[RMDB]
RNA sequence: GGGAACGACUCGAGUAGAGUCGAAAAUUCAUUUAAAUGAAUUGAAACAAAUUUAAUACAAGUGGAUGUAGGAUAACCGUCCGUCCUUUACAUUGGUAUAACAGUGAUCUAAAAUUCUAUUUAUAAUUGCGCUCUCGCGUGUUCGCACGCGAGAGAAGUUGAUAAUCAGAUUCGUCUGAUUAUCAACAAAAGAAACAACAACAACAAC
Reactivity to 2A3 in 0.01 (KOAc 150mM, MgCl2 10mM, bicine 150mM(pH8.5), 24C), signal-to-noise 2, nucleotides 027 to 156: u010u000c020a020u050u060u280a110a200a030u010g000a000a000u020u010g040a080a020a000c030a000a060a050u060u240u260a170a130u230a150c040a000a100g030u060g120g000a020u010g000u030a050g080g000a000u010a060a070c030c010g000u010c020c010g000u060c010c000u100u040u030a060c100a040u030u040g000g000u120a020u070a280a000c020a020g050u060g070a010u090c040u140a100a050a060a100u030u110c060u060a280u040u240u030a200u160a170a120u060u180g090c020g010c010u020c000u000c040g000c000g000u030g000u000u030c150g010c080a000c000g020c000g000a000g000a000g000a000a010